The record gives the reactivity of an RNA of 177 nucleotides to DMS and 2A3. Values cover nucleotides 27 to 126. For 2A3 the reverse transcriptase was SuperScript II with manganese. Source: RMDB library RFM100, as collected in RNAgym. The RNA was probed in 150 mM KOAc, 10 mM MgCl2 and 150 mM bicine (pH 8.5) at 24 C.
RNA sequence: GGGAACGACUCGAGUAGAGUCGAAAAUCUUCUCCGGCUUGCGUGCAUGCUGCCUUCCGCAAAGCUGCAGCGCGGCGCUCUGGAGGCCUUGCCCCGCGCACUGCUCUUUACAUGGCCCGACGUGAGGUCGACCCAUCACAUUCGUGUGAUGGGUCGAAAAAGAAACAACAACAACAAC
Reactivity to DMS in 0.01 (KOAc 150mM, MgCl2 10mM, bicine 150mM(pH8.5), 24C), signal-to-noise 1, nucleotides 027 to 126: u020c110u000u010c000u000c000c010g030g000c140u010u010g000c020g000u020g000c000a100u000g010c060u000g040c190c050u010u000c030c180g000c140a080a130a060g000c060u000g030c020a040g000c100g020c000g000g010c090g010c090u000c080u000g000g000a050g000g010c040c010u030u010g020c040c040c030c040g010c050g050c020a000c000u000g040c020u010c000u000u000u040a080c130a000u000g010g080c030c020c040g010a070c140g090u020g000a110g030g030
Reactivity to 2A3 in 0.01 (KOAc 150mM, MgCl2 10mM, bicine 150mM(pH8.5), 24C), signal-to-noise 3, nucleotides 027 to 126: u020c010u050u020c020u000c010c000g020g030c000u030u170g010c020g020u070g130c030a060u160g000c020u050g040c040c010u120u180c020c020g060c080a030a020a080g040c090u030g010c050a030g060c020g000c000g020g000c000g000c010u030c000u060g090g010a010g030g020c010c000u050u070g000c030c000c000c000g000c000g030c000a030c000u060g000c000u000c020u060u040u050a060c040a100u080g100g060c000c010c010g020a050c050g000u040g050a020g000g100